[RMDB]
RNA sequence: GGGAACGACUCGAGUAGAGUCGAAAACGCUGGGCGUCUCACAGCUUAAGAGCGUAUCUGAAGCGCGCACGGAAGCUCUUGAAGUCACAGGACGCCUGUGCUGAAGCGCGCACGGCAACCGAAAGGUGCGAAACACACCGAGCUUCGGCUCGGUGUGGAUAAGUCGUCGGUUCGCCGACGACUUAUCAAAAGAAACAACAACAACAAC
Reactivity to 2A3 in 0.01 (KOAc 150mM, MgCl2 10mM, bicine 150mM(pH8.5), 24C), signal-to-noise 2, nucleotides 027 to 156: c030g000c000u030g010g010g000c020g020u010c070u070c070a300c120a140g120c010u000u000a010a020g000a000g020c000g110u120a220u050c030u020g030a190a030g000c030g000c000g000c020a020c020g000g010a100a090g000c010u000c000u030u040g260a080a000g060u240c120a130c040a300g030g020a000c000g000c000c000u020g030u070g000c020u080g030a070a010g000c000g010c020g000c020a010c030g120g000c040a120a190c010c010g040a100a070a010g030g010u030g010c020g060a100a170a020c010a010c000a000c000c000g010a000g000c000u080u160c300g080g000c000u000c000g000g000u000g000u000g000